[RMDB]
RNA sequence: GGGAACGACUCGAGUAGAGUCGAAAAUGCCAUGCUGCUUGGAACUGAACUCUAACUGAAGAGUCAACUUCUUAGGCUUCACAUGGAAGAGACCUGUGAUCUGCAAGAUUUCAGAUUUCUAACAAAGAGGCAUGGCAUCUGGAGUAAAGACACCAGAACGUAAUUAGUCAUUCGUGACUAAUUACGUAAAAGAAACAACAACAACAAC
Reactivity to DMS in 0.01 (KOAc 150mM, MgCl2 10mM, bicine 150mM(pH8.5), 24C), signal-to-noise 4, nucleotides 027 to 156: u000g020c000c000a030u000g010c000u000g010c050u000u000g020g020a110a170c060u020g010a030a070c020u000c000u010a090a130c190u020g020a090a040g010a160g010u000c270a160a110c040u000u000c020u010u010a080g030g000c120u000u000c030a040c050a120u000g020g010a230a080g000a080g000a020c010c020u010g000u010g010a000u000c010u000g020c250a140a200g010a040u000u000u010c000a010g010a020u000u000u000c010u000a080a280c050a060a070a050g020a070g010g010c000a020u010g010g020c010a010u000c010u000g000g000a300g020u000a060a080a080g020a170c020a160c020c010a060g000a130
Reactivity to 2A3 in 0.01 (KOAc 150mM, MgCl2 10mM, bicine 150mM(pH8.5), 24C), signal-to-noise 9, nucleotides 027 to 156: u020g000c010c000a000u000g000c010u030g010c010u030u100g020g010a020a020c010u010g010a010a010c020u010c020u050a100a110c070u080g050a050a010g030a030g080u060c050a090a120c010u040u020c010u040u090a060g060g020c000u030u030c020a030c020a080u300g030g020a150a080g100a060g060a210c000c000u010g000u010g010a030u060c060u160g030c070a070a040g000a030u010u020u010c000a030g140a220u030u070u010c040u080a130a100c040a110a130a010g070a040g040g000c000a000u000g000g000c000a000u000c000u000g000g000a030g010u170a070a110a020g050a010c020a020c020c010a010g020a010
This 207-nucleotide RNA was probed chemically with DMS and 2A3. For DMS, 8,064 sequencing reads were counted. Source: RMDB library OK3TST, as collected in RNAgym.